An RNA of 177 nucleotides, treated with DMS and 2A3 and read out base by base. The data come from the RNA Mapping Database (RMDB), library OK2TST. The reactions ran in a buffer of 150 mM KOAc, 10 mM MgCl2 and 150 mM bicine (pH 8.5), at 24 C. Reactivities are rounded to 0.1 and cut off at 0 and 3. Values cover nucleotides 27 to 126. The DMS profile rests on 557 reads.

[RMDB]
RNA sequence: GGGAACGACUCGAGUAGAGUCGAAAAGAUCAAAGCCACAACAAGUGAAGGCGCUAAGACGCUAUUUAUGCAUUAACCUUUAGCAAUCGGUUGCAGUAAUACAUUCACGAUGAUUGCACAACAGACACCCAUGCCGUUAGUUCGCUAACGGCAUGGGAAAAGAAACAACAACAACAAC
Reactivity to DMS in 0.01 (KOAc 150mM, MgCl2 10mM, bicine 150mM(pH8.5), 24C), signal-to-noise 1, nucleotides 027 to 126: g000a030u030c160a030a150a050g050c010c000a020c080a090a070c030a030a230g000u000g030a100a030g000g000c100g010c040u030a170a150g000a080c100g030c000u000a060u000u000u010a000u000g000c000a110u010u080a060a050c020c010u030u030u030a080g000c030a010a040u000c010g000g050u000u030g010c010a000g030u000a000a030u000a080c160a040u000u010c060a060c040g010a100u000g030a000u000u000g000c060a090c190a100a000c030a080g000a060c300a170
Reactivity to 2A3 in 0.01 (KOAc 150mM, MgCl2 10mM, bicine 150mM(pH8.5), 24C), signal-to-noise 1, nucleotides 027 to 126: g090a010u090c030a000a100a100g050c020c000a060c000a170a030c000a180a000g000u060g090a080a110g000g020c000g050c030u180a110a060g120a130c010g020c000u050a120u060u030u040a080u130g020c010a010u110u130a130a060c010c000u150u060u150a100g060c030a040a030u070c040g070g000u070u040g000c060a000g110u050a030a030u110a120c110a140u020u090c040a000c000g020a020u040g050a050u050u030g010c040a020c040a080a060c020a000g110a010c000a010